[RMDB]
RNA sequence: GGGAACGACUCGAGUAGAGUCGAAAAUGCCAUCCGGGAAGCACAGUCCAAUGUAGCUACUUCGAAUGAGGUGCAAGCUGCCGAGGUAGUAAAGCGGGCUUGCGCCGCCGUUGGAUCGCUGAAGGAGGGAUGAGGGGAGUUUCGACUCCCCUCAUCCAAAAGAAACAACAACAACAAC
Reactivity to DMS in 0.01 (KOAc 150mM, MgCl2 10mM, bicine 150mM(pH8.5), 24C), signal-to-noise 1, nucleotides 027 to 126: u040g090c010c000a150u100c000c000g000g000g020a100a100g000c000a140c180a210g130u000c000c050a000a010u000g000u050a030g000c000u060a010c270u000u080c090g000a100a090u000g000a150g000g030u000g100c060a080a000g000c000u070g000c060c000g000a000g000g000u080a050g010u030a000a150a180g000c010g000g020g000c000u000u000g000c040g010c080c000g050c030c000g040u010u000g000g000a000u000c300g000c000u000g000a300a150g000g070a090g000
Reactivity to 2A3 in 0.01 (KOAc 150mM, MgCl2 10mM, bicine 150mM(pH8.5), 24C), signal-to-noise 3, nucleotides 027 to 126: u110g050c010c010a020u020c000c020g000g000g030a000a020g000c000a010c020a050g040u000c010c000a010a010u030g020u080a070g040c020u080a080c060u110u140c070g130a240a240u300g050a120g020g010u030g000c020a000a000g000c020u170g060c050c060g030a040g060g070u100a050g050u080a020a090a000g030c000g000g010g010c000u000u010g010c010g000c010c000g000c000c000g010u000u000g000g000a020u030c020g000c010u000g030a020a010g000g020a010g000
The data come from the RNA Mapping Database (RMDB), library OK1LIB. This 177-nucleotide RNA was probed chemically with DMS and 2A3. The 2A3 profile rests on 1,591 reads. The DMS profile rests on 795 reads. 2A3 adducts were read by reverse transcription with SuperScript II with manganese.